The data come from the RNA Mapping Database (RMDB), library ARCHII. This 207-nucleotide RNA was probed chemically with 2A3. 2A3 adducts were read by reverse transcription with SuperScript II with manganese. The reactions ran in a buffer of 150 mM KOAc, 10 mM MgCl2 and 150 mM bicine (pH 8.5), at 24 C. Values are in units of 0.01, from 0 to 300, in steps of 10.
RNA sequence: GGGAACGACUCGAGUAGAGUCGAAAACGGGGGAGCCCAGGGCAACCAGGUCGUCUAAGGAGGGACGCACCGGCCCAGGUUGGAAACAAAGCAGGCAAAAGUCCCCGUGUCGAUCAGUAGCGGGAUCGCGCCCGUGAAUAGGCACUGCGUUUCAGCCCAGACAAGAGUUGUUCGCAACUCUUGUCUGAAAAGAAACAACAACAACAAC
Reactivity to 2A3 in 0.01 (KOAc 150mM, MgCl2 10mM, bicine 150mM(pH8.5), 24C), signal-to-noise 1, nucleotides 027 to 156: c060g000g000g000g000g000a030g010c030c000c000a100g070g000g000c020a030a080c060c070a040g030g010u000c000g000u030c040u100a110a110g160g020a040g070g030g000a000c000g010c020a030c000c020g030g000c030c000c000a000g020g000u060u050g130g010a010a150a020c020a000a120a000g050c030a030g050g000c020a000a000a170a020g090u090c030c000c000c000g000u010g000u020c010g010a090u090c020a040g010u020a000g010c000g010g010g010a030u120c110g040c050g080c080c000c000g000u020g000a020a000u070a030g010g000c020a000c100u070g000c040g020u000u020u000c030a020g000c020c000